Conditions: 150 mM KOAc, 10 mM MgCl2 and 150 mM bicine (pH 8.5), 24 C. Structure probing data (DMS and 2A3) for a 177-nucleotide construct. DMS adducts were read by reverse transcription with MarathonRT. Reactivities are given for positions 27 through 126.
RNA sequence: GGGAACGACUCGAGUAGAGUCGAAAAGCGUCGAUGCUAGGGAUAACACACGCACACACAGAAACCUAGCAUCGAUGAUGUGUGUGGGUGUGGAGAAAUAAAUAAAGCGGAAACGCGAAAAUAAAAAGGGAAUAGAUAAGUUCGCUUAUCUAUUCCCAAAAGAAACAACAACAACAAC
Reactivity to DMS in 0.01 (KOAc 150mM, MgCl2 10mM, bicine 150mM(pH8.5), 24C), signal-to-noise 3, nucleotides 027 to 126: g010c010g000u010c010g030a300u030g010c010u010a040g020g010g020a140u030a140a040c020a070c030a040c060g000c000a040c030a050c080a090c060a040g020a160a150a130c030c040u000a110g000c060a110u010c080g000a000u000g020a070u030g020u000g000u000g020u010g000g000g090u020g020u000g020g000a080g020a090a090a050u080a080a040a070u020a070a090a160g020c010g000g000a100a110a070c010g010c000g010a030a020a030a050u050a050a050a080a090a120
Reactivity to 2A3 in 0.01 (KOAc 150mM, MgCl2 10mM, bicine 150mM(pH8.5), 24C), signal-to-noise 5, nucleotides 027 to 126: g050c010g000u000c010g040a000u050g020c020u070a060g050g040g090a140u130a210a010c020a000c000a010c010g120c100a020c000a010c000a010c000a050g100a060a060a030c030c040u030a040g050c010a040u070c020g000a010u020g020a010u000g020u000g000u010g000u010g000g100g000u030g000u010g040g020a090g060a020a090a010u260a040a070a040u190a090a070a020g000c000g010g020a020a050a000c000g000c020g020a100a020a010a000u270a010a100a020a010a010